[RMDB]
RNA sequence: GGGAACGACUCGAGUAGAGUCGAAAAACCAUCACAAUGGAGAAGCCAGUAGUUAACGUAGACGUAGACCCGCAGAGUCCGUUUGUCGUGCAACUGCAAAAGAGCUUCCCGCAAUUUGAGGUAGUAGGACGAUUAAACACUUCGGUGUUUAAUCGUCAAAAGAAACAACAACAACAAC
Reactivity to 2A3 in 0.01 (KOAc 150mM, MgCl2 10mM, bicine 150mM(pH8.5), 24C), signal-to-noise 3, nucleotides 027 to 126: a000c020c000a040u140c040a000c040a020a080u190g010g000a290g000a070a000g000c020c030a050g010u010a000g000u000u000a060a000c010g000u010a010g010a010c020g000u020a040g010a000c020c040c040g090c210a030g030a030g050u000c000c000g000u000u030u040g190u190c010g010u020g040c030a010a010c000u000g010c010a050a100a080a010g060a010g000c010u000u010c000c000c000g030c020a070a140u050u040u150g020a040g030g030u050a030g080u040a050g140
Reactivity to DMS in 0.01 (KOAc 150mM, MgCl2 10mM, bicine 150mM(pH8.5), 24C), signal-to-noise 2, nucleotides 027 to 126: a030c010c010a090u010c130a100c170a060a060u020g020g010a090g000a030a030g010c000c040a220g030u010a010g030u000u000a150a000c000g010u000a020g000a000c000g020u010a130g000a010c000c040c140g010c300a120g010a120g000u000c010c020g000u000u000u000g010u020c000g020u000g000c130a000a010c030u000g000c010a040a030a040a130g020a120g020c020u000u000c000c010c000g000c200a060a050u010u000u010g000a050g000g010u000a020g000u010a110g000